[RMDB]
RNA sequence: GGGAACGACUCGAGUAGAGUCGAAAACAUUUUCGAGCGCAUUGAUUAUAGUGAUGCUGUAUCCUACAAGUCUAGUACAACGUAUAAACUGACUGUAGGUGACAUCUUCGUACUUACCUCUCACUCUGCUUAUUAUAUUGUUCGCAAUAUAAUAAGCAAAAGAAACAACAACAACAAC
Reactivity to DMS in 0.01 (KOAc 150mM, MgCl2 10mM, bicine 150mM(pH8.5), 24C), signal-to-noise 8, nucleotides 027 to 126: c080a130u010u000u000u000c080g010a050g030c060g010c100a030u010u000g010a080u010u010a120u000a080g020u010g000a030u000g010c060u000g010u000a090u000c000c000u000a010c010a040a090g010u000c010u010a050g020u000a080c170a080a080c250g010u000a110u010a070a090a050c060u000g000a030c000u000g000u000a010g000g000u000g000a080c050a020u000c020u000u000c060g010u010a050c070u010u000a100c120c030u000c040u000c040a080c100u000c070u000
Reactivity to 2A3 in 0.01 (KOAc 150mM, MgCl2 10mM, bicine 150mM(pH8.5), 24C), signal-to-noise 9, nucleotides 027 to 126: c010a010u060u050u110u110c040g030a030g020c040g000c060a030u030u060g060a050u150u220a080u130a140g090u070g040a030u020g010c030u020g030u040a040u030c000c000u000a000c010a140a060g000u000c020u200a010g020u040a060c060a180a020c210g120u150a060u080a230a140a030c010u010g010a000c000u000g000u000a000g000g000u010g010a000c000a020u020c020u070u030c020g030u010a040c010u020u030a050c010c010u010c010u010c010a030c030u070c030u030
The record gives the reactivity of an RNA of 177 nucleotides to DMS and 2A3. DMS adducts were read by reverse transcription with MarathonRT. Reactivities are rounded to 0.1 and cut off at 0 and 3. The RNA was probed in 150 mM KOAc, 10 mM MgCl2 and 150 mM bicine (pH 8.5) at 24 C.